[RMDB]
RNA sequence: GGGAACGACUCGAGUAGAGUCGAAAACGGCAAAGCUAGGCUAGGAUUUGGAAGGUGGUGUGAGGCGAAGCGGCUGGAGGCAGGAGGCUAGCGGAUUGGGGGGAAGAAAAGCCGAAAUGGAUUCCCGAUAAAUAAUAAAAUUCGUUUUAUUAUUUAUAAAAGAAACAACAACAACAAC
Reactivity to 2A3 in 0.01 (KOAc 150mM, MgCl2 10mM, bicine 150mM(pH8.5), 24C), signal-to-noise 2, nucleotides 027 to 126: c020g010g010c040a080a000a040g040c030u120a010g040g050c010u020a030g070g040a110u070u050u190g080g020a080a080g050g010u060g020g050u040g050u080g070a030g050g030c080g030a060a000g020c020g060g030c050u020g000g020a020g040g000c020a020g000g050a000g000g000c020u070a010g060c010g010g000a020u020u070g000g000g000g010g000g000a050a000g050a030a150a000a010g000c000c010g020a050a070a070u090g010g050a010u000u050c000c000c000g000
Reactivity to DMS in 0.01 (KOAc 150mM, MgCl2 10mM, bicine 150mM(pH8.5), 24C), signal-to-noise 4, nucleotides 027 to 126: c050g000g020c050a060a080a110g020c060u010a080g010g010c050u010a060g000g000a100u010u030u020g000g000a070a070g000g010u020g010g030u010g020u020g020a130g000g010c070g000a080a080g030c110g000g020c040u000g010g020a090g000g010c110a050g010g000a100g000g020c060u020a030g030c060g000g000a160u020u000g000g000g010g000g000g010a040a070g010a050a060a060a120g020c000c010g010a040a060a090u010g000g000a200u000u000c000c010c000g010